[RMDB]
RNA sequence: GGGAACGACUCGAGUAGAGUCGAAAACUCUGAAAAACAUCAAGACCAUGUGUCUCUAACUGUGCCACUCUGUGGUUCAGGAAACCUGGUUGAAAAACUUUCACCAUGGUUCAUGGAUGGCGAAAAUGACGAAAAGCGUUCGCGCUUUUCAAAAGAAACAACAACAACAAC
Reactivity to DMS in 0.01 (KOAc 150mM, MgCl2 10mM, bicine 150mM(pH8.5), 24C), signal-to-noise 2, nucleotides 027 to 129: c030u010c000u030g000a040a070a030a070a060c020a070u030c020a000a170g030a090c000c000a090u000g020u020g000u000c020u060c120u040a090a090c030u020g000u030g030c040c040a000c030u110c090u050g020u000g020g030u010u020c030a000g000g030a040a030a030c040c030u030g030g020u000u080g030a030a010a030a060a050c210u070u010u030c000a040c030c030a020u080g040g000u000u000c050a050u020g030g000a030u000g010g010c140g020a050a050a090a030u030g000a000c150
Reactivity to 2A3 in 0.01 (KOAc 150mM, MgCl2 10mM, bicine 150mM(pH8.5), 24C), signal-to-noise 7, nucleotides 027 to 129: c010u010c020u030g060a030a050a020a030a020c030a070u080c060a090a040g080a110c000c020a080u080g080u030g040u070c010u000c020u080a060a050c000u010g010u020g010c020c010a040c020u300c060u100g020u020g000g000u040u030c010a010g020g000a030a020a030c010c020u030g020g000u070u120g080a030a010a010a030a020c050u050u070u050c020a020c030c000a060u210g020g000u020u020c000a000u050g040g030a040u020g020g010c030g060a060a050a020a080u170g040a040c090